[RMDB]
RNA sequence: GGGAACGACUCGAGUAGAGUCGAAAAGAAUCGUAGCGUCUAACGUAUCUGCUAAAGCUCUUUGAUUAUCAUGAUACCAAUAAACUGUCAUUCCAUUUGCAUUAGAUGAUUCUAAUGCAUCAUUAUGCGCCUCUCCUAAGUUCGCUUAGGAGAGGCGAAAAGAAACAACAACAACAAC
Reactivity to DMS in 0.01 (KOAc 150mM, MgCl2 10mM, bicine 150mM(pH8.5), 24C), signal-to-noise 1, nucleotides 027 to 126: g030a010a090u040c070g020u010a080g010c050g000u000c050u010a030a150c110g000u000a050u000c020u030g010c030u000a040a040a090g010c080u020c250u000u020u000g000a050u010u010a050u010c070a030u000g000a050u000a050c050c050a010a090u020a050a020a040c090u020g000u010c050a080u000u000c010c050a130u000u000u000g010c010a010u000u000a000g010a030u030g010a230u020u000c000u010a000a020u000g000c000a000u000c230a060u000u000a120u030g060
Reactivity to 2A3 in 0.01 (KOAc 150mM, MgCl2 10mM, bicine 150mM(pH8.5), 24C), signal-to-noise 2, nucleotides 027 to 126: g010a010a070u110c060g030u070a010g030c000g060u050c030u060a060a050c030g020u020a080u020c030u040g020c040u060a110a020a080g020c010u050c080u130u120u090g070a090u030u100a030u120c020a060u180g040a010u010a020c010c040a020a090u110a150a110a020c060u060g080u100c020a020u030u110c040c030a060u020u060u080g000c000a000u010u030a030g030a060u280g100a110u170u070c000u000a000a000u000g030c000a010u000c000a000u020u250a070u070g080
Overview
An RNA of 177 nucleotides, treated with DMS and 2A3 and read out base by base. For 2A3 the reverse transcriptase was SuperScript II with manganese. The RNA was probed in 150 mM KOAc, 10 mM MgCl2 and 150 mM bicine (pH 8.5) at 24 C. The 2A3 profile rests on 1,171 reads.